[RMDB]
RNA sequence: GGGAACGACUCGAGUAGAGUCGAAAAGGUUGAUCAGGUGAUGAAAUAUUUCGGAUGUAAACUCACAGACCUGUUCUGAAUGCGCAAAACCGUGUAGAGAUUUCCGUUGCCUUCCUUCUGAUGAUAACACACGUGAUUAUUUCGAUAAUCACGUGUGAAAAGAAACAACAACAACAAC
Reactivity to DMS in 0.01 (KOAc 150mM, MgCl2 10mM, bicine 150mM(pH8.5), 24C), signal-to-noise 6, nucleotides 027 to 126: g000g000u010u010g010a080u010c070a060g000g010u020g000a080u020g000a070a100a070u010a100u010u010u000c050g000g010a100u010g010u000a070a070a090c110u010c040a090c060a090g010a060c030c050u010g010u010u000c040u000g010a070a050u000g010c050g020c060a050a040a060a090c100c040g020u000g010u000a090g010a090g000a080u010u020u000c030c040g010u000u010g000c040c010u010u010c030c020u000u010c070u000g020a050u010g000a090u020a080a170
Reactivity to 2A3 in 0.01 (KOAc 150mM, MgCl2 10mM, bicine 150mM(pH8.5), 24C), signal-to-noise 5, nucleotides 027 to 126: g070g010u050u070g030a060u050c060a020g040g080u060g050a120u050g060a070a100a060u180a100u050u120u090c020g000g010a020u050g040u140a100a070a070c030u040c030a030c010a010g070a030c000c050u050g040u040u000c010u060g060a110a060u100g000c050g000c060a010a100a060a120c020c030g030u050g000u090a050g040a020g000a130u060u020u040c020c030g020u040u060g010c010c000u000u030c000c010u030u040c040u040g120a150u090g040a080u110a210a020